An RNA of 177 nucleotides, treated with 2A3 and DMS and read out base by base.
RNA sequence: GGGAACGACUCGAGUAGAGUCGAAAAGGUUAGGCGGUUUGAUUCGCGGUGGAAAGUAAUGUUACAGAACUUUACCUACUGUAGCUCCCCUGAGUGCCCCCAGGCUAUGCUAUUAUGCGCAACCUGAUAGUCGAAGUAGUUUCGACUACUUCGACUAAAAAGAAACAACAACAACAAC
Reactivity to 2A3 in 0.01 (KOAc 150mM, MgCl2 10mM, bicine 150mM(pH8.5), 24C), signal-to-noise 2, nucleotides 027 to 126: g060g000u070u050a080g050g000c060g020g070u170u280u120g190a230u130u120c070g000c040g010g000u060g010g040a000a110a000g020u050a020a170u120g060u260u100a080c050a030g150a070a000c020u000u040u220a190c000c010u030a030c020u020g000u020a010g020c000u050c000c000c020c000u050g040a050g220u060g040c000c010c000c010c040a010g080g000c000u020a010u010g010c010u020a080u300u030a050u240g010c010g000c010a020a100c010c000u030g010a060
Reactivity to DMS in 0.01 (KOAc 150mM, MgCl2 10mM, bicine 150mM(pH8.5), 24C), signal-to-noise 3, nucleotides 027 to 126: g020g020u000u000a080g000g030c080g020g000u000u000u000g000a100u000u000c080g030c050g020g030u000g010g010a080a070a070g000u010a040a080u010g020u000u010a100c150a080g000a110a050c100u010u000u000a110c070c040u000a070c030u000g010u000a050g000c030u000c030c040c010c050u000g010a080g000u000g020c090c020c020c060c010a030g000g000c020u000a070u000g000c010u000a090u000u010a070u020g010c030g000c080a070a050c010c010u000g010a260
Overview: For 2A3 the reverse transcriptase was SuperScript II with manganese. The data come from the RNA Mapping Database (RMDB), library OK2TRN.